Source: RMDB library OK3TST, as collected in RNAgym. Chemical mapping of a 207-nucleotide RNA with DMS and 2A3. Values cover nucleotides 27 to 156.
RNA sequence: GGGAACGACUCGAGUAGAGUCGAAAAUCAUUUCAUCAAAGCUAGUGAAAGUUUUUAAAGGCUUUAACCCUUCAGCGUAUGGGAUAUUCUGUAAAGUUUGAUACAAAGUUUGCAUGCCCUCCCACAACUCUCUCAGUUCAUCCACGGCAAGUCCAUCUACGAAUAAACGUUUCGACGUUUAUUCGUAAAAAGAAACAACAACAACAAC
Reactivity to DMS in 0.01 (KOAc 150mM, MgCl2 10mM, bicine 150mM(pH8.5), 24C), signal-to-noise 1, nucleotides 027 to 156: u000c050a080u020u010u000c020a050u000c040a070a100a180g010c040u000a070g010u010g000a090a090a070g000u000u000u000u030u000a030a080a200g030g000c000u000u000u000a080a130c030c030c000u000u000c050a140g050c110g000u000a110u000g000g030g020a200u000a060u000u000c060u010g000u010a090a080a030g030u000u000u020g010a230u000a090c040a050a030a120g000u000u000u000g020c010a130u000g000c040c000c010u000c020c000c040a090c090a040a030c030u010c010u000c030u000c020a100g030u000u000c050a110u000c010c020a060c050g000g010c010a050a070g000u030c000c030a130u000c040
Reactivity to 2A3 in 0.01 (KOAc 150mM, MgCl2 10mM, bicine 150mM(pH8.5), 24C), signal-to-noise 2, nucleotides 027 to 156: u050c020a000u040u140u090c050a060u040c050a130a050a110g060c050u110a070g130u080g110a090a070a030g040u090u070u050u120u280a120a180a020g030g000c010u120u070u040a080a130c010c000c000u000u050c040a050g030c000g050u130a070u070g000g010g030a030u020a040u150u060c040u060g060u090a020a050a110g060u030u060u070g080a070u060a090c020a020a100a010g050u050u100u030g030c030a010u150g010c040c000c010u020c030c010c000a040c010a040a060c000u020c000u000c000u000c070a000g000u040u030c010a000u000c050c000a030c020g020g000c040a050a020g020u000c020c000a030u020c010

The 2A3 profile rests on 1,053 reads.